Chemical mapping of a 177-nucleotide RNA with DMS and 2A3. The DMS profile rests on 1,615 reads. Conditions: 150 mM KOAc, 10 mM MgCl2 and 150 mM bicine (pH 8.5), 24 C. The 2A3 profile rests on 3,437 reads. Values cover nucleotides 27 to 126.
[RMDB]
RNA sequence: GGGAACGACUCGAGUAGAGUCGAAAAUAUUAGGGUGUGAGAGUAUCUCUCUCCCAGCCGGUUCGCGGAGCCAUCUUUUUCGACUUUACUUGGGUUAGCUGCGCGAACUGGCUGGCGUUCCCAGCAACCCCAGUACAGAAUUCGUUCUGUACUGGGGAAAAGAAACAACAACAACAAC
Reactivity to DMS in 0.01 (KOAc 150mM, MgCl2 10mM, bicine 150mM(pH8.5), 24C), signal-to-noise 1, nucleotides 027 to 126: u010a040u000u000a190g010g000g010u010g000u000g010a030g010a060g000u010a150u000c060u020c000u010c020u000c020c020c010a020g020c000c010g000g000u010u000c010g030c020g000g000a000g000c010c120a030u010c040u000u000u020u000u010c030g000a040c040u000u000u020a050c190u010u010g020g000g020u010u000a050g020c020u000g000c010g040c010g000a010a020c000u000g000g010c010u000g000g010c010g010u000u000c010c010c000a270g000c210a100a080
Reactivity to 2A3 in 0.01 (KOAc 150mM, MgCl2 10mM, bicine 150mM(pH8.5), 24C), signal-to-noise 3, nucleotides 027 to 126: u130a050u080u110a050g020g000g000u010g000u020g030a020g000a020g060u250a300u110c040u000c000u010c000u010c080c000c000a000g000c020c000g020g000u000u000c000g000c000g050g120a010g040c030c020a070u030c120u050u200u020u020u080c050g030a020c030u100u190u220a060c040u180u160g040g020g000u060u040a000g000c010u100g080c000g000c000g000a010a000c000u010g000g030c000u000g000g010c000g010u000u000c000c000c000a000g050c000a020a090